This 177-nucleotide RNA was probed chemically with 2A3 and DMS. Reactivities are given for positions 27 through 126. 2A3 adducts were read by reverse transcription with SuperScript II with manganese.

[RMDB]
RNA sequence: GGGAACGACUCGAGUAGAGUCGAAAAAGAUCGCAGCGACGAGGCUGAAAGCGACGACGACCACGAUCAUCGCGAAGACCGCGGCGAUCGCCAGCGCAUUGUCUUCCCAGAGGCCGAACUUCGCCUGAUCCUGCUAGGGUUUCGACCCUAGCAGGAUAAAAGAAACAACAACAACAAC
Reactivity to 2A3 in 0.01 (KOAc 150mM, MgCl2 10mM, bicine 150mM(pH8.5), 24C), signal-to-noise 4, nucleotides 027 to 126: a000g050a030u030c020g020c040a020g020c020g070a110c040g050a090g110g040c030u040g080a180a060a020g030c020g010a010c000g010a010c000g040a070c040c090a120c080g010a180u040c030a000u020c000g010c020g060a030a040g070a070c050c040g020c010g010g000c020g010a070u040c020g020c020c010a060g000c040g010c130a110u020u110g040u050c010u010u050c020c000c000a020g020a030g100g000c050c020g010a090a040c060u050u050c050g000c020c020u040g050
Reactivity to DMS in 0.01 (KOAc 150mM, MgCl2 10mM, bicine 150mM(pH8.5), 24C), signal-to-noise 3, nucleotides 027 to 126: a040g020a030u000c020g000c060a050g050c020g010a070c030g000a130g010g000c040u010g000a130a080a250g030c000g000a030c090g010a030c010g000a110c170c120a170c090g000a130u000c040a030u010c070g000c000g030a220a150g010a110c130c000g000c020g000g000c030g000a010u000c010g030c040c050a070g010c050g000c050a110u010u000g000u000c090u000u020c020c000c010a140g000a080g010g000c030c040g000a030a190c090u000u010c120g000c040c040u020g010